[RMDB]
RNA sequence: GGGAACGACUCGAGUAGAGUCGAAAAGAGUGAUGGCCAUGGCAUGGAAGAAGGUGAGACUUGCAUGAAUCGUGAAUCAAAACCUCCAUGAUUAUCACUGCAAGUCGUACCUUUUUCCUAGCCAUGACCGAGGAGCGUUUUUCGAAACGCUCCUCGGAAAAGAAACAACAACAACAAC
Reactivity to DMS in 0.01 (KOAc 150mM, MgCl2 10mM, bicine 150mM(pH8.5), 24C), signal-to-noise 2, nucleotides 027 to 126: g010a050g000u030g010a100u050g000g010c080c000a000u000g000g000c000a300u000g000g130a000a010g000a020a010g000g050u000g000a080g000a000c000u000u020g000c010a030u010g000a020a020u010c010g080u000g000a090a080u080c180a070a080a150a190c300c160u020c100c010a000u010g000a000u000u000a120u010c000a100c300u000g000c000a010a000g000u000c000g000u000a010c000c000u000u000u010u000u010c000c000u000a230g000c000c000a000u000g000a040
Reactivity to 2A3 in 0.01 (KOAc 150mM, MgCl2 10mM, bicine 150mM(pH8.5), 24C), signal-to-noise 2, nucleotides 027 to 126: g130a040g030u150g080a080u130g050g000c000c000a000u000g000g020c010a020u000g020g020a000a000g010a010a000g040g020u030g010a040g000a000c020u010u020g020c010a000u040g000a000a000u020c040g020u040g040a020a100u170c190a170a100a050a060c030c020u070c040c010a000u000g000a020u050u140a100u250c060a020c170u040g020c000a000a010g000u000c000g000u030a000c000c000u000u000u000u000u000c000c000u000a000g000c000c000a000u000g000a000